[RMDB]
RNA sequence: GGGAACGACUCGAGUAGAGUCGAAAAAUUAGCUCAGUGGUAGAGCGCGCCCCUGAUAAUUGCGUCGUUGUGCCUGGGCUGUGAGGGCUCUCAGCCACAUGGAUAGUUCAAUGUGCUCAUCGGCGCCUCGCUGGUUCCGGUUCGCCGGAACCAGCGAAAAAGAAACAACAACAACAAC
Reactivity to 2A3 in 0.01 (KOAc 150mM, MgCl2 10mM, bicine 150mM(pH8.5), 24C), signal-to-noise 1, nucleotides 027 to 126: a000u050u010a020g030c000u000c000a000g000u050g080g060u080a030g000a000g040c000g000c000g000c000c050c000c000u030g250a120u280a180a060u270u190g000c000g000u030c000g000u060u010g050u060g000c000c030u030g000g000g000c050u010g000u010g000a300g000g040g000c010u010c000u060c080a050g000c040c000a100c000a090u160g070g180a170u130a040g000u130u100c040a100a300u160g000u080g060c000u000c080a000u040c000g000g030c000g080c000c000